[RMDB]
RNA sequence: GGGAACGACUCGAGUAGAGUCGAAAAGCAAGUAUAUGUUGCCUACACCAAAUGAACAAGUUGAUAGAGACUCAACUGAUAUUGCUCAUUCAUACAUUGAUUUUGUUUUAGGUGGAUUGCUUGCAACCAGGCUAAUGAGCUUCGGCUCAUUAGCCUGAAAAGAAACAACAACAACAAC
Reactivity to DMS in 0.01 (KOAc 150mM, MgCl2 10mM, bicine 150mM(pH8.5), 24C), signal-to-noise 1, nucleotides 027 to 126: g020c020a000a020g090u010a030u030a000u010g000u040u000g010c000c000u000a030c120a100c170c120a000a020a010u000g030a210a100c150a090a020g010u000u000g000a040u000a300g080a150g010a130c240u000c050a100a060c070u010g000a060u000a080u050u000g010c010u000c060a170u000u000c050a010u000a010c020a110u000u010g000a230u000u000u000u000g000u000u000u000u000a010g010g020u000g010g000a010u000u000g000c000u000u000g000c000a130a100c150
Reactivity to 2A3 in 0.01 (KOAc 150mM, MgCl2 10mM, bicine 150mM(pH8.5), 24C), signal-to-noise 1, nucleotides 027 to 126: g010c020a000a000g020u020a220u020a000u180g300u260u090g060c020c000u010a010c060a010c050c010a000a040a020u070g010a150a010c080a130a070g010u070u020g020a000u070a080g150a030g030a080c050u040c150a060a170c120u080g020a030u020a150u100u200g000c020u000c020a040u070u130c010a020u000a240c000a080u030u040g040a060u100u100u000u050g120u000u020u010u010a010g010g000u020g020g020a000u030u010g010c000u010u000g000c010a000a000c030